[RMDB]
RNA sequence: GGGAACGACUCGAGUAGAGUCGAAAACACGAGUGCCAAGCUUCUUAUAGAGAUAUUUCAAUACCUGGAAAAAGGGACCGGGACGCAAAGUUUGGGAAUGGAAUUUCCCCGCCCGUAACGGUGAUUAUAAACUACCCUUAUUCGUAAGGGUAGUUUAAAAAGAAACAACAACAACAAC
Reactivity to 2A3 in 0.01 (KOAc 150mM, MgCl2 10mM, bicine 150mM(pH8.5), 24C), signal-to-noise 6, nucleotides 027 to 126: c050a010c030g060a050g050u100g050c040c020a040a020g010c030u120u030c010u090u160a090u120a150g080a020g010a050u100a140u150u160u140c060a080a040u080a180c000c020u080g090g030a050a030a090a070a020g060g020g000a000c000c000g000g000g010a050c010g010c040a070a040a090g030u070u090u100g020g000g050a040a050u110g050g150a030a050u000u020u040c000c000c000c010g040c000c000c010g050u030a070a010c030g000g010u060g030a070u040u220a070
Reactivity to DMS in 0.01 (KOAc 150mM, MgCl2 10mM, bicine 150mM(pH8.5), 24C), signal-to-noise 8, nucleotides 027 to 126: c090a070c130g010a090g010u010g000c020c020a100a090g010c040u010u010c050u010u010a090u020a070g010a100g010a110u020a070u010u010u020c060a080a080u020a090c040c020u000g010g010a050a060a060a110a120g000g010g000a060c060c030g000g010g010a050c040g010c090a080a070a080g000u000u020u020g010g010g000a040a040u020g010g030a100a120u010u010u000c000c000c000c130g000c030c040c020g000u040a050a060c110g000g010u000g010a100u020u030a070
Record summary: Structure probing data (2A3 and DMS) for a 177-nucleotide construct. For 2A3 the reverse transcriptase was SuperScript II with manganese. Values cover nucleotides 27 to 126. Source: RMDB library OK1LIB, as collected in RNAgym.